Structure probing data (2A3) for a 207-nucleotide construct. 2A3 adducts were read by reverse transcription with SuperScript II with manganese. Conditions: 150 mM KOAc, 10 mM MgCl2 and 150 mM bicine (pH 8.5), 24 C. The data come from the RNA Mapping Database (RMDB), library M2RFPK.

RNA sequence: GGGAACGACUCGAGUAGAGUCGAAAAAAAUCACCUCGGUAUGAUUAGGGUGAGACCUAGGAACCGUAGGGGUAUUCUCAAAGGAAGCUUUUGCAGUGACGCCCAUGUAAGUGGGAUAUAACAACAUAUCAGUUUCGCAGUUUCGACUGCGAAACAACCUUUCUGCUUAGUUCGCUAAGCAGAAAGGAAAAGAAACAACAACAACAAC
Reactivity to 2A3 in 0.01 (KOAc 150mM, MgCl2 10mM, bicine 150mM(pH8.5), 24C), signal-to-noise 2, nucleotides 027 to 156: a000a000a000u070c010a100c010c000u020c000g050g000u230a160u220g060a110u060u020a000g000g000g030u040g070a100g090a050c000c000u010a020g030g000a070a040c000c040g040u180a020g030g030g010g000u010a060u010u000c010u000c000a070a080a030g110g050a060a030g000c000u040u070u140u150g030c110a050g020u020g070a020c050g030c020c000c000a010u070g030u160a090a070g020u000g010g000g040a000u000a000u020a050a020c060a030a000c030a080u180a040u150c080a010g000u010u000u000c010g000c010a000g000u010u040u090c120g060a030c010u010g000c010g000a000a000a000c000a000a000